[RMDB]
RNA sequence: GGGAACGACUCGAGUAGAGUCGAAAACCUAGGCAUCGCACCUCUAUCCGGUGUCAAAGCAAUGGCGCAGACCUUAGGCACCGAGCGCGUAUUUCGGAGCAUGUGUUUCGGGGGCAGGCAUGGCUACCUACUAUGUUGUGUUCGCACAACAUAGUAGAAAAGAAACAACAACAACAAC
Reactivity to 2A3 in 0.01 (KOAc 150mM, MgCl2 10mM, bicine 150mM(pH8.5), 24C), signal-to-noise 4, nucleotides 027 to 126: c010c000u010a030g030g000c010a040u040c060g020c030a070c010c030u050c030u100a100u060c020c020g000g010u030g000u000c000a030a040a010g000c020a030a090u300g040g000c180g050c230a070g050a250c020c000u070u130a030g010g000c020a000c020c020g010a030g020c080g000c020g030u060a150u040u140u090c050g030g010a040g060c070a090u070g060u010g030u130u040u080c040g010g010g000g010g000c030a020g010g010c020a020u030g030g000c010u030a080c000
Reactivity to DMS in 0.01 (KOAc 150mM, MgCl2 10mM, bicine 150mM(pH8.5), 24C), signal-to-noise 5, nucleotides 027 to 126: c000c000u000a080g010g000c030a100u010c070g010c040a100c050c020u000c130u010a090u000c120c020g010g000u000g020u010c010a070a090a100g010c090a080a070u010g010g000c030g040c140a070g000a160c070c030u000u000a050g010g000c010a030c010c020g010a060g030c090g020c060g020u010a080u000u000u000c050g020g000a090g010c050a060u010g010u010g000u000u000u010c050g010g010g010g010g020c080a030g000g010c040a060u000g010g000c040u000a100c120
Chemical mapping of a 177-nucleotide RNA with 2A3 and DMS. The data come from the RNA Mapping Database (RMDB), library VIROID. The RNA was probed in 150 mM KOAc, 10 mM MgCl2 and 150 mM bicine (pH 8.5) at 24 C. Reactivities are given for positions 27 through 126. For 2A3 the reverse transcriptase was SuperScript II with manganese. The DMS profile rests on 5,507 reads.